[RMDB]
RNA sequence: GGGAACGACUCGAGUAGAGUCGAAAAAAAGGGGCUGUCCAAAAAGAGUCAGAUGAGUAUAUUCUGGCUAAAGGGCCGUUACAAGUAGGAGAUUCAGUUCUCUUGCAAGGCCAUUCUCUAGCUAAGAUCAGGAGCGGCUUCGGCCGCUCCAAAAGAAACAACAACAACAAC
Reactivity to 2A3 in 0.01 (KOAc 150mM, MgCl2 10mM, bicine 150mM(pH8.5), 24C), signal-to-noise 1, nucleotides 027 to 129: a000a010a000g000g000g020g000c030u070g020u020c000c070a000a000a040a000a000g060a000g000u060c000a040g000a030u000g080a000g000u150a090u070a110u140u060c000u000g000g010c000u000a000a050a000g000g010g000c020c000g010u000u000a020c050a000a000g020u000a070g000g010a000g020a000u010u010c000a010g300u030u100c000u030c000u000u010g000c000a000a160g000g000c000c000a000u050u010c080u000c000u000a000g000c030u110a200a030g130a110u130c000a000
Reactivity to DMS in 0.01 (KOAc 150mM, MgCl2 10mM, bicine 150mM(pH8.5), 24C), signal-to-noise 2, nucleotides 027 to 129: a000a000a000g110g010g000g020c000u050g030u000c000c060a170a020a060a090a070g000a150g040u010c020a030g020a110u060g000a080g090u030a130u000a120u000u040c010u060g000g000c010u000a000a130a000g000g000g020c000c000g040u070u040a040c210a000a100g030u000a000g070g000a000g090a110u010u020c210a070g020u010u000c000u000c000u010u010g020c050a180a090g020g040c000c000a210u030u000c000u020c000u000a050g000c050u110a070a120g000a020u000c120a140